[RMDB]
An RNA of 177 nucleotides, treated with 2A3 and DMS and read out base by base. Reactivities are rounded to 0.1 and cut off at 0 and 3.

RNA sequence: GGGAACGACUCGAGUAGAGUCGAAAAGAUAUGGAGGGUUACUGGAGCAGUUCGGAAACGAAUACUGCGAUGAAAGUACCCUCCUAAGUCAAACCCAAAAUAGCAGCUUCGGCUGCUAUUUUGGGAAGUAAUACUUGGAGUUCGCUCCAAGUAUUACAAAAGAAACAACAACAACAAC
Reactivity to 2A3 in 0.01 (KOAc 150mM, MgCl2 10mM, bicine 150mM(pH8.5), 24C), signal-to-noise 3, nucleotides 027 to 126: g000a020u070a030u180g000g010a000g030g010g030u190u220a020c010u010g010g000a020g000c000a010g000u010u010c020g030g060a090a070a090c010g010a030a040u180a280c000u000g020c030g180a300u050g000a000a000a000g000u010a000c010c000c000u010c000c000u000a020a010g010u000c010a010a020a070c000c000c000a000a000a010a000u000a000g000c000a000g010c000u140u170c300g220g010c020u010g000c000u010a000u000u000u000u000g000g000g000a000a010
Reactivity to DMS in 0.01 (KOAc 150mM, MgCl2 10mM, bicine 150mM(pH8.5), 24C), signal-to-noise 3, nucleotides 027 to 126: g000a030u000a300u010g000g000a030g000g010g020u010u010a000c000u000g010g000a100g000c000a000g000u000u010c000g000g010a080a090a200c010g010a030a070u010a070c000u000g010c000g000a090u010g000a160a120a050g000u000a030c010c010c000u000c000c000u000a010a070g010u000c010a100a120a220c010c000c000a000a010a020a000u000a020g000c000a000g010c000u000u020c250g020g020c000u000g000c000u000a000u000u000u000u000g000g000g000a000a020
The DMS profile rests on 2,700 reads.